[RMDB]
RNA sequence: GGGAACGACUCGAGUAGAGUCGAAAAUUCAGAAUCACGGAACUCUUCUAACACUCGCCGCUUUAACCUGGGGAUACUUUCCUCCUCGGUUGUCGAGGGAUCAUCCAUAUCCCCGGUUUUAAUUGACUCGGAUGAUCCUAGACAUUCCGUGGUACAGCCUACAACGAGUGUUCGCACUCGUUGUAGGAAAAGAAACAACAACAACAAC
Reactivity to 2A3 in 0.01 (KOAc 150mM, MgCl2 10mM, bicine 150mM(pH8.5), 24C), signal-to-noise 2, nucleotides 027 to 156: u220u100c030a040g010a070a060u030c010a010c060g050g040a030a050c040u030c010u220u060c140u110a190a070c030a020c020u030c000g020c010c010g150c070u280u080u200a050a030c020c060u130g110g000g000g000a010u090a090c020u010u170u160c040c050u000c010c000u040c060g000g030u110u040g000u070c000g000a090g000g010g010a000u010c000a000u000c020c000a010u090a110u220c020c000c000c000g010g000u020u000u090u100a040a010u060u120g060a020c060u000c080g030g000a020u030g000a000u030c020c000u050a040g000a000c000a030u110u000c000c000g010u020g020g000u080a160c080a070g010
About this RNA:
Structure probing data (2A3) for a 207-nucleotide construct. Conditions: 150 mM KOAc, 10 mM MgCl2 and 150 mM bicine (pH 8.5), 24 C. As a SHAPE reagent, 2A3 marks flexible, mostly unpaired nucleotides at the ribose 2'-OH. 2A3 adducts were read by reverse transcription with SuperScript II with manganese. Values cover nucleotides 27 to 156. Reactivities are rounded to 0.1 and cut off at 0 and 3.